[RMDB]
RNA sequence: GGGAACGACUCGAGUAGAGUCGAAAAUUGAGGUUCGCCUCAACAGGCUCCUAAGUCGACCAUGAAUGGCUAAGACAGUUGCUGCAAGUCGGAAACGAUGAUGACCAGCAAUCGAGCCAUUCCUGGUCGAUAUGGACAAGUGUUGGUUCGCCAACAACGGUAAAUUCUCUUUCGAGAGAAUUUACCGAAAAGAAACAACAACAACAAC
Reactivity to DMS in 0.01 (KOAc 150mM, MgCl2 10mM, bicine 150mM(pH8.5), 24C), signal-to-noise 2, nucleotides 027 to 156: u030u000g040a030g050g000u000u000c300g030c000c000u000c010a010a030c040a150g040g020c110u000c030c000u030a100a260g050u000c010g000a070c000c000a040u010g000a070a030u000g000g040c010u000a190a180g020a160c300a040g000u000u000g000c000u000g000c010a050a250g010u010c010g000g020a240a130a180c030g020a060u000g040a140u000g010a180c300c000a030g010c050a010a020u000c020g000a050g000c000c000a020u000u000c000c020u000g020g000u000c000g000a000u000a080u000g000g000a050c040a120a140g000u000g010u000u000g000g000u000u010c030g000c100c010a030a050c020a030a120
Reactivity to 2A3 in 0.01 (KOAc 150mM, MgCl2 10mM, bicine 150mM(pH8.5), 24C), signal-to-noise 5, nucleotides 027 to 156: u030u030g000a010g010g040u080u150c240g080c060c000u020c020a020a070c040a050g150g080c110u030c010c000u060a170a050g010u010c010g000a000c010c000a000u000g000a010a000u000g010g020c030u070a100a030g070a090c070a060g050u010u010g000c000u000g000c040a090a260g000u010c010g050g080a110a090a060c050g020a030u070g050a130u090g030a070c050c010a000g000c010a010a010u120c040g010a010g000c000c000a000u000u010c000c000u000g000g000u000c000g000a000u000a010u020g000g000a000c030a130a090g070u020g010u100u000g030g020u050u070c140g070c100c010a020a020c040a050a020
Conditions: 150 mM KOAc, 10 mM MgCl2 and 150 mM bicine (pH 8.5), 24 C. The record gives the reactivity of an RNA of 207 nucleotides to DMS and 2A3. The 2A3 profile rests on 4,443 reads. DMS adducts were read by reverse transcription with MarathonRT. 2A3 adducts were read by reverse transcription with SuperScript II with manganese.